[RMDB]
RNA sequence: GGGAACGACUCGAGUAGAGUCGAAAACCGUAACGGGUUCGCCCGUUACGGAAAAGUUGCUCUCAAGACUUAUUUUUGAAAAGGAGAGACAGAAAAUGGAAAAGGAAUCUACGUUCGCGUAGAUUCCCAAUCGCAUAAAGUUCGCUUUAUGCGAUUGAAAAGAAACAACAACAACAAC
Reactivity to DMS in 0.01 (KOAc 150mM, MgCl2 10mM, bicine 150mM(pH8.5), 24C), signal-to-noise 4, nucleotides 027 to 126: c000c000g020u000a010a000c000g020g010g000u000u010c270g020c000c000c000g030u000u000a000c000g000g000a010a030a050a090g010u010u000g010c030u000c010u000c010a120a110g010a180c080u000u000a090u000u010u010u020u000g010a060a050a080a110g010g000a030g010a020g010a130c140a090g010a050a060a070a090u000g010g010a070a090a100a120g010g000a020a010u000c000u000a000c010g020u000u020c240g020c010g020u010a010g000a000u000u000c000c010
Reactivity to 2A3 in 0.01 (KOAc 150mM, MgCl2 10mM, bicine 150mM(pH8.5), 24C), signal-to-noise 3, nucleotides 027 to 126: c000c000g000u000a000a000c000g000g010g050u050u030c140g090c020c000c020g000u000u010a000c000g010g000a000a010a000a000g040u050u080g020c000u000c000u000c020a060a070g090a110c050u130u080a110u280u180u080u130u230g120a090a060a010a010g080g000a020g020a010g030a010c010a020g220a050a110a070a060u250g060g040a080a060a040a040g000g000a010a000u010c000u020a010c000g020u020u040c170g000c010g110u010a000g010a010u010u000c000c000
About this RNA:
Chemical mapping of a 177-nucleotide RNA with DMS and 2A3. The reactions ran in a buffer of 150 mM KOAc, 10 mM MgCl2 and 150 mM bicine (pH 8.5), at 24 C. For 2A3, 3,233 sequencing reads were counted.